This 177-nucleotide RNA was probed chemically with 2A3 and DMS.
The 2A3 profile rests on 3,039 reads.
Values cover nucleotides 27 to 126.
The reactions ran in a buffer of 150 mM KOAc, 10 mM MgCl2 and 150 mM bicine (pH 8.5), at 24 C.
RNA sequence: GGGAACGACUCGAGUAGAGUCGAAAAUGGCGGUGUAUGACGUCGAGAAUGAUGUUUCUGUUCAACCCUGCGAUCCACCCGACCUGCCAAACCUGGCCGUGGGCGAACAGUAUGAACGGUGUCAUGGGCUGGUACUAUUGUUCGCAAUAGUACCAGCAAAAGAAACAACAACAACAAC
Reactivity to 2A3 in 0.01 (KOAc 150mM, MgCl2 10mM, bicine 150mM(pH8.5), 24C), signal-to-noise 3, nucleotides 027 to 126: u120g050g010c020g050g000u050g010u080a090u130g050a020c010g010u020c040g010a030g030a090a120u170g080a050u130g110u070u130u010c030u040g020u020u050c030a040a080c020c010c010u020g000c050g020a030u030c000c000a030c010c010c030g020a100c010c010u050g040c000c000a100a070a100c030c050u020g050g000c000c010g030u030g000g020g000c000g000a010a000c020a010g060u090a080u110g050a060a020c020g000g040u020g020u030c020a080u050g020g060
Reactivity to DMS in 0.01 (KOAc 150mM, MgCl2 10mM, bicine 150mM(pH8.5), 24C), signal-to-noise 3, nucleotides 027 to 126: u010g000g020c050g000g010u010g010u000a040u000g000a050c030g040u000c010g010a090g020a150a110u000g000a090u010g000u000u000u010c020u000g000u000u020c050a070a150c130c040c050u000g020c050g010a070u010c070c040a100c060c020c060g010a050c050c010u010g020c050c050a030a080a100c160c070u000g010g000c100c040g000u000g020g000g020c120g000a030a030c060a050g000u000a110u000g010a060a100c050g010g000u000g000u010c030a040u010g000g010